[RMDB]
RNA sequence: GGGAACGACUCGAGUAGAGUCGAAAAUGAAAGUAGUCUCCUGCAGCGACUGGGGUUUCCGUUGCAGUCCUCGGAACCAGGACCUCGGCGUGGCCUAGCGAGUUAUGGCGACGAAGGCCGUGAAAAAGAUUGGUCUUAUGUUCGCAUAAGACCAAUCAAAAGAAACAACAACAACAAC
Reactivity to DMS in 0.01 (KOAc 150mM, MgCl2 10mM, bicine 150mM(pH8.5), 24C), signal-to-noise 3, nucleotides 027 to 126: u000g000a110a050a100g000u000a100g010u010c020u000c030c020u000g000c010a050g010c030g000a080c070u000g010g010g010g020u000u000u000c060c010g010u000u000g000c050a090g000u000c030c020u000c090g010g000a060a110c090c080a070g010g000a090c090c010u010c020g030g020c030g020u000g000g010c010c020u000a130g010c080g010a090g010u010u010a080u000g010g010c020g000a080c030g000a100a090g000g010c000c010g000u010g010a040a050a100a090a060
Reactivity to 2A3 in 0.01 (KOAc 150mM, MgCl2 10mM, bicine 150mM(pH8.5), 24C), signal-to-noise 2, nucleotides 027 to 126: u120g010a020a040a040g090u130a010g010u020c020u030c030c010u030g000c050a010g050c020g100a050c020u060g000g000g000g060u020u070u000c040c020g020u030u040g000c010a030g120u070c020c020u010c030g050g020a060a050c050c010a030g020g070a040c000c010u000c000g030g000c030g030u060g000g000c000c030u030a030g050c030g030a030g020u070u120a110u180g080g000c000g010a060c000g020a070a020g040g000c030c040g040u080g070a070a080a010a000a010